RNA sequence: GGGAACGACUCGAGUAGAGUCGAAAACUCGCGACCCCAUAGAGGCGUGGGGAGCGACAUGAAUCAGCCUCGAUUAGAUGUGGUCGACGGUACCGCGGCGUACAGCGACCUAGUUAGAAGCCGCAAAACCGGAAGAGAUGACGCUCGACGGACGUCAAUUAUGCCAUAUAUUCGUAUAUGGCAUAAUAAAAGAAACAACAACAACAAC
Reactivity to 2A3 in 0.01 (KOAc 150mM, MgCl2 10mM, bicine 150mM(pH8.5), 24C), signal-to-noise 5, nucleotides 027 to 156: c030u010c020g000c000g060a300c000c010c000c000a000u020a030g020a010g000g000c010g000u010g000g000g000g000a010g020c010g030a040c050a130u300g080a140a070u120c070a040g000c000c000u010c010g020a130u130u210a080g100a130u120g070u090g090g010u030c010g020a110c030g050g000u030a020c010c090g010c010g020g020c020g010u070a030c020a000g010c000g020a070c010c030u000a020g000u000u030a030g010a190a010g010c000c010g020c050a030a030a060a070c020c010g030g040a080a050g050a020g020a030u130g010a020c020g010c080u030c030g060a050c040g050g010a010c020g030u020c000a000
Reactivity to DMS in 0.01 (KOAc 150mM, MgCl2 10mM, bicine 150mM(pH8.5), 24C), signal-to-noise 3, nucleotides 027 to 156: c040u000c010g010c020g010a150c000c000c020c010a060u000a090g020a060g020g010c030g000u000g000g050g000g010a300g010c010g000a040c050a070u030g000a150a120u000c080a080g000c020c000u000c020g010a200u010u000a070g020a090u070g030u000g010g000u000c030g020a060c050g010g020u000a050c060c090g030c060g010g010c020g020u030a070c060a140g010c020g020a080c020c030u000a060g030u000u010a120g020a060a130g020c010c020g030c030a090a040a100a120c030c020g000g010a140a150g000a130g000a120u010g010a030c020g030c010u000c020g020a130c040g010g010a040c010g030u000c000a100

Annotation:
Chemical mapping of a 207-nucleotide RNA with 2A3 and DMS. 2A3 adducts were read by reverse transcription with SuperScript II with manganese. Values cover nucleotides 27 to 156.